[RMDB]
RNA sequence: GGGAACGACUCGAGUAGAGUCGAAAACUCGCAGGGUUCGCCCUGCGAGAAAGGCCGAGGUUGUUGCUCGGUUGAAAACAACAACCCUUGGAAAGAAGGGAAAAACCCUUACCUUCGGGUAAGGGAACUAGUUAACCUAGUUCGCUAGGUUAACUAGAAAAGAAACAACAACAACAAC
Reactivity to DMS in 0.01 (KOAc 150mM, MgCl2 10mM, bicine 150mM(pH8.5), 24C), signal-to-noise 4, nucleotides 027 to 126: c000u000c010g020c010a010g010g010g020u000u010c220g010c000c000c000u000g010c010g000a000g000a020a070a090g010g010c010c000g010a030g000g020u000u000g010u000u000g010c020u000c050g000g010u000u000g000a040a040a070a090c050a040a080c150a070a110c010c000c000u000u000g010g000a140a150a160g000a040a020g000g000g020a040a050a060a100a100c000c000c000u000u000a010c000c000u000u010c220g020g010g010u000a000a010g000g000g020a000a030
Reactivity to 2A3 in 0.01 (KOAc 150mM, MgCl2 10mM, bicine 150mM(pH8.5), 24C), signal-to-noise 2, nucleotides 027 to 126: c000u010c000g010c000a010g030g010g030u060u080c060g070c030c000c000u000g010c000g000a000g010a020a030a010g010g000c000c030g010a020g050g040u070u060g020u080u090g080c040u010c060g000g000u010u030g000a010a010a020a000c040a030a030c030a030a100c020c000c020u020u020g120g250a090a110a120g040a050a030g050g020g000a040a020a010a020a050c000c000c000u000u000a000c000c000u020u050c250g080g010g010u000a010a000g020g000g000a000a010
Source: RMDB library M2PK50, as collected in RNAgym.
The record gives the reactivity of an RNA of 177 nucleotides to DMS and 2A3.
For 2A3 the reverse transcriptase was SuperScript II with manganese.